[RMDB]
RNA sequence: GGGAACGACUCGAGUAGAGUCGAAAAUGCGACUGUUAGAUUGCAAGCUGGUUCUAACACCGAGUUUGCCUCUAAUUCCUCGGUGUUGUCACUUGUUAACUUCACCGUUGAUCCUCAAAAAGCUUAUGAAGCGGGCUGUUCGCAGCCCGCAAAAGAAACAACAACAACAAC
Reactivity to 2A3 in 0.01 (KOAc 150mM, MgCl2 10mM, bicine 150mM(pH8.5), 24C), signal-to-noise 3, nucleotides 027 to 129: u150g030c000g040a040c010u010g000u020u000a030g010a230u060u110g010c010a010a000g000c070u040g000g000u110u070c140u180a060a030c030a000c040c000g020a010g000u000u130u100g100c010c000u080c010u020a080a150u010u020c010c000u010c000g030g000u000g010u000u000g000u010c030a010c070u030u050g010u040u210a010a000c010u050u060c030a000c000c000g020u000u000g030a040u030c010c010u030c010a040a020a030a010a020g040c130u230u030a130u210g070a110a000
Reactivity to DMS in 0.01 (KOAc 150mM, MgCl2 10mM, bicine 150mM(pH8.5), 24C), signal-to-noise 2, nucleotides 027 to 129: u000g070c040g070a110c060u000g030u040u000a030g000a050u000u130g000c020a060a010g000c180u050g000g040u060u070c100u050a060a080c090a060c010c000g000a000g060u000u020u000g000c090c150u040c010u100a120a150u010u000c050c000u000c030g060g000u000g000u020u020g000u030c000a040c080u080u000g070u010u090a090a160c070u030u010c000a080c220c030g080u000u060g040a090u070c010c030u100c090a000a000a000a000a000g050c120u270u020a140u010g050a020a060
Source: RMDB library 15KLIB, as collected in RNAgym. Structure probing data (2A3 and DMS) for a 170-nucleotide construct. DMS adducts were read by reverse transcription with MarathonRT. Reactivities are given for positions 27 through 129. Values are in units of 0.01, from 0 to 300, in steps of 10. Conditions: 150 mM KOAc, 10 mM MgCl2 and 150 mM bicine (pH 8.5), 24 C.